RNA sequence: GGGAACGACUCGAGUAGAGUCGAAAAGGCAGGACUUACCAAGUCUGGGGGCCGAUGAGGUUUGGCUCAAAGUAGGGUUUUGACUUGAAAACUCAAGCUGUGACCCCAAAACGAUGGAGGUAAAUGAAAAAUCCAUCUGCCUUCGGGCAGAUGGAAACAUGUACUGAUGGUUCGCCAUCAGUACAUGAAAAGAAACAACAACAACAAC
Reactivity to DMS in 0.01 (KOAc 150mM, MgCl2 10mM, bicine 150mM(pH8.5), 24C), signal-to-noise 3, nucleotides 027 to 156: g000g020c020a070g000g000a060c030u000u000a110c070c030a080a260g010u000c030u000g020g030g010g070g000c060c070g030a130u030g010a070g020g020u000u000u000g020g000c040u010c040a110a060a100g030u000a150g000g020g010u000u000u000u000g010a070c070u000u000g000a050a090a120a130c140u010c010a020a020g020c010u010g000u010g000a160c030c000c000c030a030a050a060a070c050g000a090u000g010g010a080g030g000u000a050a040a130u000g000a010a070a080a160a120u000c000c000a000u000c000u000g000c000c000u000u010c300g040g020g030c010a020g000a030u020g010g000a000a020a050
Reactivity to 2A3 in 0.01 (KOAc 150mM, MgCl2 10mM, bicine 150mM(pH8.5), 24C), signal-to-noise 4, nucleotides 027 to 156: g030g010c040a010g000g030a030c020u050u070a100c050c030a070a000g050u010c050u050g030g020g010g020g000c050c060g030a040u090g070a060g060g000u010u080u100g020g000c000u020c050a050a060a020g060u090a100g020g040g000u030u060u100u080g070a100c010u030u040g040a020a000a110a140c050u030c030a010a000g000c020u050g060u120g100a050c000c000c000c040a040a050a000a040c060g050a030u050g040g030a030g030g030u100a080a090a150u220g070a070a050a010a000a020u030c000c010a000u000c000u000g000c010c000u020u050c140g010g000g000c000a000g000a000u000g010g000a000a000a000
Structure probing data (DMS and 2A3) for a 207-nucleotide construct. It was measured as part of the RMDB library M2RFPK. DMS adducts were read by reverse transcription with MarathonRT. Values cover nucleotides 27 to 156. The RNA was probed in 150 mM KOAc, 10 mM MgCl2 and 150 mM bicine (pH 8.5) at 24 C.